[RMDB]
RNA sequence: GGGAACGACUCGAGUAGAGUCGAAAAGAUAUGGACGUGUGUAAGGGAGAAGAGCCAUCGGAAACGAUGGAACUUCGAGGAUCUUACCACGUCCUAAGUCAAAGGGUCACGGUUCGCCGUGACCCAACAUUGCAUGAGGGUUCGCCCUCAUGCAAUGAAAAGAAACAACAACAACAAC
Reactivity to 2A3 in 0.01 (KOAc 150mM, MgCl2 10mM, bicine 150mM(pH8.5), 24C), signal-to-noise 2, nucleotides 027 to 126: g020a000u070a040u100g000g010a010c000g000u030g030u050g000u020a000a000g040g010g010a200g020a040a010g010a010g040c010c000a000u000c000g010g020a060a080a020c010g000a020u020g000g000a000a010c020u000u000c020g040a170g000g060a040u000c010u000u000a000c000c020a010c000g000u000c000c000u000a010a000g000u000c030a020a090a120g020g020g000u020c010a010c030g030g080u070u150c300g080c100c000g000u010g010a000c000c000c000a020a000
Reactivity to DMS in 0.01 (KOAc 150mM, MgCl2 10mM, bicine 150mM(pH8.5), 24C), signal-to-noise 3, nucleotides 027 to 126: g000a070u000a300u010g000g010a000c000g030u000g010u020g010u000a010a030g000g000g010a080g010a040a010g000a080g010c000c000a000u000c000g000g020a160a050a240c000g020a020u000g010g000a010a020c000u000u000c000g010a090g000g010a060u000c010u000u010a000c010c020a000c000g020u010c000c000u010a000a050g020u010c040a110a150a120g030g010g010u000c000a010c000g030g000u000u010c300g040c000c010g030u000g010a010c000c010c000a010a010